[RMDB]
RNA sequence: GGGAACGACUCGAGUAGAGUCGAAAACUAGUUAAAUAAAAAUUAAUAUCAACUGCCUCCUAACUUCUAAUGUCAUGUUGUUUAUAACUAAUGAACUGAUUAGGGGAUAAACAUAUCACGAAGACAUUCCACUCUCCUGCCUCGGCUCCGCUGCCGCCAAUAAUGCAGAGUUCGCUCUGCAUUAUUGAAAAGAAACAACAACAACAAC
Reactivity to 2A3 in 0.01 (KOAc 150mM, MgCl2 10mM, bicine 150mM(pH8.5), 24C), signal-to-noise 1, nucleotides 027 to 156: c020u030a000g080u050u140a140a090a130u160a220a270a210a120a090u080u210a150a160u150a250u270c160a150a050c020u020g020c000c040u010c000c020u100a090a110c020u210u000c010u160a080a080u040g030u020c020a000u020g030u080u000g000u000u200u090a080u050a040a020c020u020a020a020u080g030a050a100c020u080g000a020u000u080a000g000g020g030g020a000u030a000a070a000c020a000u030a020u010c050a000c130g120a040a020g010a020c000a030u100u070c050c020a070c000u080c000u000c000c010u020g040c000c000u020c000g040g020c030u040c030c020g010c070u100g010c000c000g040c000
This 207-nucleotide RNA was probed chemically with 2A3. The 2A3 profile rests on 337 reads. It was measured as part of the RMDB library OK3TST.